[RMDB]
RNA sequence: GGGAACGACUCGAGUAGAGUCGAAAAAGGACGUGGUGCGCGGCUUUAUCGUCCCGCGUGACGCAAGGGGCUUUUCCACCCCCAAAAUCGGCCACAAGAUGAGCCUGCGGGCCUCCACCACCGGGGAGGAAGAUUCUGUUUUCGAACAGAAUCUUCCAAAAGAAACAACAACAACAAC
Reactivity to 2A3 in 0.01 (KOAc 150mM, MgCl2 10mM, bicine 150mM(pH8.5), 24C), signal-to-noise 1, nucleotides 027 to 126: a000g110g020a030c030g040u070g000g050u040g020c110g010c000g010g050c010u120u110u210a140u100c080g080u060c030c020c030g090c040g040u080g000a010c020g050c000a050a100g010g000g000g000c020u060u030u050u000c000c010a030c000c000c000c020c010a030a010a000a070u130c050g030g020c000c050a030c030a110a030g100a190u070g030a000g050c000c040u040g000c070g030g000g000c000c020u040c000c050a030c020c000a030c040c020g000g020g060g010a050
Reactivity to DMS in 0.01 (KOAc 150mM, MgCl2 10mM, bicine 150mM(pH8.5), 24C), signal-to-noise 2, nucleotides 027 to 126: a170g010g010a040c160g040u000g000g000u000g040c070g000c110g030g000c030u000u000u000a100u020c100g020u000c060c010c090g040c090g040u000g010a010c040g000c170a210a160g020g000g010g000c070u010u000u020u020c090c070a300c140c010c000c000c130a050a080a100a120u000c070g000g000c000c010a090c050a100a210g000a140u010g000a070g000c030c000u000g030c070g020g010g010c050c000u010c030c010a060c020c010a030c020c020g020g000g020g020a290

This 177-nucleotide RNA was probed chemically with 2A3 and DMS. The RNA was probed in 150 mM KOAc, 10 mM MgCl2 and 150 mM bicine (pH 8.5) at 24 C. For 2A3 the reverse transcriptase was SuperScript II with manganese. The 2A3 profile rests on 966 reads.